[RMDB]
RNA sequence: GGGAACGACUCGAGUAGAGUCGAAAAGGGGUCUCCCAGAGGAAACCCAUGGAGGCUUGGAUUUAUACAGCUGAAGCCUCCACGGCUGUAUUGUCAGCCUCCACGCGGUUUCCCUGGGAGACGGAGGCACCCAAAUCUAGUCCUUCGGGACUAGAAACGGUCUAUACUAGUUCGCUAGUAUAGACCGAAAAGAAACAACAACAACAAC
Reactivity to 2A3 in 0.01 (KOAc 150mM, MgCl2 10mM, bicine 150mM(pH8.5), 24C), signal-to-noise 1, nucleotides 027 to 156: g040g030g020g000u000c010u020c020c000c040a020g170a160g000g000a010a000a010c000c010c020a050u100g000g010a020g020g020c150u220u250g110g010a080u200u300u120a000u120a010c000a010g000c000u000g040a150a030g070c010c000u000c000c000a000c030g010g000c010u020g000u000a000u030u000g050u040c020a010g000c000c000u000c010c000a000c010g080c110g010g020u000u000u000c000c020c000u000g000g000g000a000g000a000c000g000g000a000g010g000c010a030c020c000c000a050a090a000u040c000u000a000g000u000c010c000u000u100c300g070g020g000a000c000u000a000g000a000a000a000
An RNA of 207 nucleotides, treated with 2A3 and read out base by base. It was measured as part of the RMDB library RNAMAK.